An RNA of 177 nucleotides, treated with DMS and 2A3 and read out base by base.

RNA sequence: GGGAACGACUCGAGUAGAGUCGAAAAUGCUCACCGUGUAUUGGUUGCUUGGCGGUUUUCUGCGGAAGCGCCGCAACAUCCGUGAUAUGACCAAGACGCUGCGGCGCAUCAAAGACGUGGUCGAGGACCUACUCCGACUAUUCGUAGUCGGAGUAGGAAAAGAAACAACAACAACAAC
Reactivity to DMS in 0.01 (KOAc 150mM, MgCl2 10mM, bicine 150mM(pH8.5), 24C), signal-to-noise 3, nucleotides 027 to 126: u010g010c030u000c030a130c050c060g010u000g000u000a060u000u000g010g000u000u000g020c070u000u000g020g010c050g010g020u010u000u000u010c030u000g030c100g000g010a140a130g020c050g010c020c000g030c010a010a020c040a070u000c010c060g030u000g020a170u010a100u010g010a100c100c080a120a100g000a060c050g020c040u000g000c010g000g000c030g000c010a060u010c080a060a110a090g000a090c110g020u010g000g010u000c030g020a080g000g000a220
Reactivity to 2A3 in 0.01 (KOAc 150mM, MgCl2 10mM, bicine 150mM(pH8.5), 24C), signal-to-noise 2, nucleotides 027 to 126: u100g010c000u000c000a020c000c030g030u050g070u060a110u050u160g050g040u030u150g010c040u020u060g040g000c030g040g050u030u070u080u080c010u050g050c010g050g010a110a040g020c050g000c010c000g000c000a010a030c020a040u030c000c040g060u060g110a080u080a090u300g080a090c000c040a030a060g010a020c050g000c030u030g000c000g020g000c000g000c010a030u030c030a000a100a000g080a040c030g050u070g020g040u010c030g030a040g030g040a020
Record summary:
2A3 adducts were read by reverse transcription with SuperScript II with manganese. The RNA was probed in 150 mM KOAc, 10 mM MgCl2 and 150 mM bicine (pH 8.5) at 24 C.